[RMDB]
RNA sequence: GGGAACGACUCGAGUAGAGUCGAAAAGAUGGAGCCGGCCGCAGCUACCGGCUUUAUAAGCCCGUCGGGUUGCCGUCCUCGGCGCCGCUGGUCGUCAUGUUGCACGGCGGGUUCGGCAGCGCCAAGCAUCCAUUUCUUGUUUCGACAAGAAAUGGAUAAAAGAAACAACAACAACAAC
Reactivity to 2A3 in 0.01 (KOAc 150mM, MgCl2 10mM, bicine 150mM(pH8.5), 24C), signal-to-noise 2, nucleotides 027 to 126: g070a030u030g030g000a010g000c000c020g070g030c050c060g060c060a030g000c000u010a020c000c020g050g000c070u010u000u000a050u010a040a010g030c000c000c020g000u090c030g050g010g010u100u070g010c010c010g040u020c000c030u050c050g050g000c000g000c000c020g010c020u050g040g040u070c020g040u030c020a100u180g150u200u230g160c100a030c050g060g000c040g010g020g000u130u060c020g020g000c000a010g020c020g020c010c000a020a010g040c030
Reactivity to DMS in 0.01 (KOAc 150mM, MgCl2 10mM, bicine 150mM(pH8.5), 24C), signal-to-noise 4, nucleotides 027 to 126: g000a090u000g010g000a030g030c010c010g010g030c110c100g010c150a080g000c040u000a200c020c010g000g000c010u000u010u000a020u010a120a100g010c010c000c010g030u010c080g010g010g010u000u000g010c020c040g010u000c070c020u010c090g000g010c000g020c050c040g020c020u000g010g020u010c030g020u000c050a120u010g010u010u010g030c110a070c080g010g000c000g000g020g000u000u000c020g010g000c000a040g010c030g010c010c030a080a110g020c210